This 177-nucleotide RNA was probed chemically with 2A3 and DMS. As a SHAPE reagent, 2A3 marks flexible, mostly unpaired nucleotides at the ribose 2'-OH. For 2A3, 4,022 sequencing reads were counted. Source: RMDB library OK1LIB, as collected in RNAgym.
RNA sequence: GGGAACGACUCGAGUAGAGUCGAAAAUCUUCUACCACUUGUUGGUUGAUAUAAAUGGAGUACAUGGCGGAAAAUGGGGCAAUGGCGUUACUCACAUCGUUGGCACCAUGUGCGAAGGAUGCACAAGGACACGUAUAUCUUUCGAGAUAUACGUGUCAAAAGAAACAACAACAACAAC
Reactivity to 2A3 in 0.01 (KOAc 150mM, MgCl2 10mM, bicine 150mM(pH8.5), 24C), signal-to-noise 5, nucleotides 027 to 126: u040c000u050u020c030u050a050c000c030a040c050u100u130g060u060u010g120g020u020u060g080a020u040a000u030a140a130a060u170g040g000a060g020u030a050c050a140u090g070g000c040g050g060a030a050a060a150u130g040g020g030g000c020a030a060u030g040g000c000g020u030u050a030c020u050c060a060c020a080u090c090g040u020u060g060g000c020a030c030c040a070u090g020u010g010c040g030a040a050g140g040a060u140g000c020a010c000a030a060g130
Reactivity to DMS in 0.01 (KOAc 150mM, MgCl2 10mM, bicine 150mM(pH8.5), 24C), signal-to-noise 6, nucleotides 027 to 126: u020c070u000u010c030u020a060c020c010a070c130u030u010g020u020u000g010g000u010u020g010a080u030a040u020a060a070a080u020g010g010a100g000u010a090c070a060u000g010g030c050g000g000a040a040a040a090u020g000g010g010g000c050a070a060u020g000g010c060g020u000u000a050c100u030c070a090c100a050u010c060g010u000u010g010g000c050a070c020c060a070u000g010u000g000c020g010a130a090g010g000a080u010g010c060a060c100a100a110g000